This 207-nucleotide RNA was probed chemically with 2A3 and DMS.
[RMDB]
RNA sequence: GGGAACGACUCGAGUAGAGUCGAAAACGAUCAAGGUCAACGCCUCCCCCGGCAACCCCGUCGCGUUCGACAUGCGCGGCCAGACCAAACGGUUCGCGCUCGACUGCGAGCGAUUCGCCGACGCGGUCCUGGAACAAGAGCUCGUCCACGACAACAAAGAACCAUAAAUGUUCGCAUUUAUGGUUCUAAAAGAAACAACAACAACAAC
Reactivity to 2A3 in 0.01 (KOAc 150mM, MgCl2 10mM, bicine 150mM(pH8.5), 24C), signal-to-noise 3, nucleotides 027 to 156: c010g000a020u140c040a080a070g050g010u020c050a090a100c190g020c030c030u060c040c000c010c010c000g020g000c030a040a050c000c000c000c010g010u030c010g010c030g030u020u030c040g050a040c040a100u100g020c010g000c000g040g030c010c000a030g050a120c060c000a070a070a010c040g060g000u250u220c000g010c010g040c020u030c030g070a090c070u130g060c010g050a040g000c010g050a050u070u060c060g000c030c050g030a180c040g020c040g010g000u040c030c040u050g020g020a050a020c020a100a050g000a000g030c040u020c030g020u000c010c030a060c090g110a030c020a090a000c030a080a270
Reactivity to DMS in 0.01 (KOAc 150mM, MgCl2 10mM, bicine 150mM(pH8.5), 24C), signal-to-noise 2, nucleotides 027 to 156: c050g070a120u000c060a130a120g030g010u010c010a110a090c040g000c020c010u010c010c010c010c040c050g050g000c060a070a100c020c030c040c020g000u000c000g000c030g030u010u000c020g000a060c060a070u000g000c030g000c010g000g050c030c000a040g020a180c090c100a120a180a190c090g010g030u000u010c050g010c040g000c020u000c010g030a080c080u020g080c030g000a010g030c020g010a180u000u000c070g020c020c020g010a160c050g040c140g000g000u010c020c020u000g070g020a030a160c060a060a130g010a060g050c040u010c030g010u000c000c000a060c030g000a110c020a050a110c050a080a120
For DMS the reverse transcriptase was MarathonRT. 2A3 is a SHAPE reagent: it acylates the 2'-hydroxyl of flexible nucleotides of all four kinds. Source: RMDB library OK3TST, as collected in RNAgym. 2A3 adducts were read by reverse transcription with SuperScript II with manganese.